[RMDB]
RNA sequence: GGGAACGACUCGAGUAGAGUCGAAAAGAUAUGGAAGCUGAUGACCACGGUCCCACUUUGAUCUCGGAAACGAGGGAGUGGGCGUGCAAGGCUUCCUAAGUCAAAGAUCGCCGUUCGCGGCGAUCAAGCCCUCUAAUGAGUUCGCUCAUUAGAGGGCAAAAGAAACAACAACAACAAC
Reactivity to 2A3 in 0.01 (KOAc 150mM, MgCl2 10mM, bicine 150mM(pH8.5), 24C), signal-to-noise 2, nucleotides 027 to 126: g010a030u080a040u170g000g000a010a000g000c010u060g030a280u140g020a130c050c090a010c030g080g300u300c030c100c010a020c040u230u290u060g120a130u040c000u000c000g000g060a140a090a050c010g000a020g000g020g000a010g000u000g000g000g050c020g000u000g020c040a120a250g010g020c000u000u050c000c000u010a100a030g000u000c030a080a000a080g010a020u000c010g010c040c000g020u070u020c300g000c020g170g050c040g000a000u000c020a000a000
Reactivity to DMS in 0.01 (KOAc 150mM, MgCl2 10mM, bicine 150mM(pH8.5), 24C), signal-to-noise 1, nucleotides 027 to 126: g000a010u020a300u000g000g010a020a020g020c020u020g020a150u020g010a190c300c000a000c010g010g160u010c020c000c000a010c000u000u000u000g020a050u010c010u000c000g020g000a090a010a140c010g000a000g000g000g000a020g020u000g000g000g000c020g010u010g000c000a020a140g010g000c000u000u030c000c000u000a010a070g000u000c030a120a130a100g000a000u000c000g000c000c000g030u000u000c270g020c020g020g010c000g000a020u000c000a020a130